[RMDB]
RNA sequence: GGGAACGACUCGAGUAGAGUCGAAAAGACAGACACCUACAUCCUGAAGAGCCCGGACGAGGCCUCACAGCUGCUGGACGACCACAUCGUCAUGACCCAGAAUAUGUCAUUUUCACCCUACAAGAAGCCCUUUGAGCAGCGCAUCAACUCCUGGGAACGAGUAAUUUUAUUUCGAUAAAAUUACUCGAAAAGAAACAACAACAACAAC
Reactivity to DMS in 0.01 (KOAc 150mM, MgCl2 10mM, bicine 150mM(pH8.5), 24C), signal-to-noise 2, nucleotides 027 to 156: g020a120c020a020g030a140c030a070c040c010u010a140c000a070u000c000c010u010g000a070a140g030a130g020c020c030c040g060g040a090c010g020a100g010g020c010c060u020c040a060c070a080g030c000u000g000c010u000g010g020a070c040g000a130c000c060a110c030a300u000c030g020u010c030a060u000g000a120c060c030c020a130g000a050a100u000a070u010g000u020c020a070u000u000u000u010c040a050c030c010c010u000a070c040a040a070g000a090a050g010c000c020c000u000u000u010g010a090g000c010a090g010c070g020c100a070u000c030a040a060c030u000c010c030u010g000g020g000a070a260
Reactivity to 2A3 in 0.01 (KOAc 150mM, MgCl2 10mM, bicine 150mM(pH8.5), 24C), signal-to-noise 3, nucleotides 027 to 156: g030a010c050a020g060a020c010a030c070c020u070a050c020a100u070c010c020u060g060a140a060g030a060g080c040c050c020g040g020a060c060g040a060g040g010c000c020u020c000a040c010a020g040c020u070g010c000u050g040g020a040c010g030a020c000c070a050c030a140u070c030g080u050c020a040u080g050a070c000c000c060a030g090a090a040u150a050u120g050u030c030a040u040u040u050u060c030a050c020c000c000u060a060c040a060a040g050a070a030g020c030c000c000u050u080u060g030a030g000c020a000g010c010g000c050a050u080c020a060a060c020u030c030c040u050g030g000g050a020a020
The data come from the RNA Mapping Database (RMDB), library OK3TST. Chemical mapping of a 207-nucleotide RNA with DMS and 2A3. The RNA was probed in 150 mM KOAc, 10 mM MgCl2 and 150 mM bicine (pH 8.5) at 24 C.